Conditions: 150 mM KOAc, 10 mM MgCl2 and 150 mM bicine (pH 8.5), 24 C. An RNA of 177 nucleotides, treated with DMS and 2A3 and read out base by base. The 2A3 profile rests on 10,191 reads. The DMS profile rests on 15,414 reads. 2A3 adducts were read by reverse transcription with SuperScript II with manganese.
RNA sequence: GGGAACGACUCGAGUAGAGUCGAAAAUGCGCUCGGUUAAUGGCCAACACUUUGUGGUCAGAGCAAACCGGAAAAACUGGCAGGCAAAUGCAAAAUAUUGCACACAAGCACCCACUUACGGUCGCUAAAAUUAUAAUCGGUUCGCCGAUUAUAAUUUAAAAGAAACAACAACAACAAC
Reactivity to DMS in 0.01 (KOAc 150mM, MgCl2 10mM, bicine 150mM(pH8.5), 24C), signal-to-noise 7, nucleotides 027 to 126: u010g010c070g010c040u010c030g010g010u010u020a110a130u000g000g010c010c010a040a080c140a160c220u020u010u030g030u000g000g000u000c010a010g000a120g020c150a040a060a040c010c010g020g000a040a060a050a080a100c130u010g000g000c050a060g010g000c040a040a060a060u010g000c050a040a040a090a120u030a060u010u000g000c010a040c120a070c100a090a060g000c050a070c040c000c030a080c100u010u010a090c130g000g010u000c110g020c060u020a030
Reactivity to 2A3 in 0.01 (KOAc 150mM, MgCl2 10mM, bicine 150mM(pH8.5), 24C), signal-to-noise 8, nucleotides 027 to 126: u120g010c060g010c030u040c020g030g010u050u070a090a050u060g000g010c010c010a230a070c070a090c130u180u180u280g080u030g020g000u010c010a010g010a020g040c050a070a010a010c000c000g020g060a040a060a000a000a040c030u030g060g000c020a020g060g000c020a040a060a020u040g010c010a000a010a050a070u210a130u050u090g010c010a020c000a000c000a060a030g010c010a050c010c000c010a040c020u050u090a050c080g060g010u060c020g010c090u070a170